[RMDB]
RNA sequence: GGGAACGACUCGAGUAGAGUCGAAAAUAAAAGGGCAUUUCGAUGCCCUUUUAGCGUAACCUUUGUGACGAGUAGACAUGCGUGAAACCCAUUGGGUACGCACGCAACAGCUACCGUCACUCUGGUCUUAACAUCCUAUCAUUCGUGAUAGGAUGAACCAUAAUCGGAUAUUCGUAUCCGAUUAUGGAAAAGAAACAACAACAACAAC
Reactivity to 2A3 in 0.01 (KOAc 150mM, MgCl2 10mM, bicine 150mM(pH8.5), 24C), signal-to-noise 7, nucleotides 027 to 156: u040a010a010a000a000g000g000g000c010a000u050u080u300c300g100a040u060g000c000c000c010u000u000u000u000a000g000c010g020u060a030a020c000c000u000u020u020g000u000g010a020c020g020a090g100u010a010g020a090c040a110u040g010c010g000u010g020a090a050a050c000c020c100a300u180u300g020g000g010u060a070c210g010c020a000c000g000c000a010a020c030a050g010c000u000a000c000c000g000u000c000a000c000u000c010u000g020g000u020c030u120u100a080a030c010a000u000c000c010u000a000u000c000a010u020u150c220g150u050g010a000u000a000g010g000a000u000g000a010a010
Reactivity to DMS in 0.01 (KOAc 150mM, MgCl2 10mM, bicine 150mM(pH8.5), 24C), signal-to-noise 3, nucleotides 027 to 156: u000a000a010a010a010g010g010g020c000a030u000u000u000c300g000a060u000g020c020c000c000u000u000u000u000a020g030c130g020u000a070a050c010c000u000u000u010g040u000g020a060c020g020a150g030u000a030g000a050c080a300u000g020c010g050u000g020a060a070a050c010c010c010a300u000u010g030g040g020u010a020c130g030c020a020c000g000c010a040a080c100a130g020c000u000a010c020c010g020u000c000a000c000u020c040u000g010g010u000c040u010u000a100a160c000a020u000c010c010u000a010u000c020a110u010u020c300g010u010g000a030u000a000g000g020a000u000g000a020a110
The record gives the reactivity of an RNA of 207 nucleotides to 2A3 and DMS. It was measured as part of the RMDB library RNAMAK. Values cover nucleotides 27 to 156. The RNA was probed in 150 mM KOAc, 10 mM MgCl2 and 150 mM bicine (pH 8.5) at 24 C.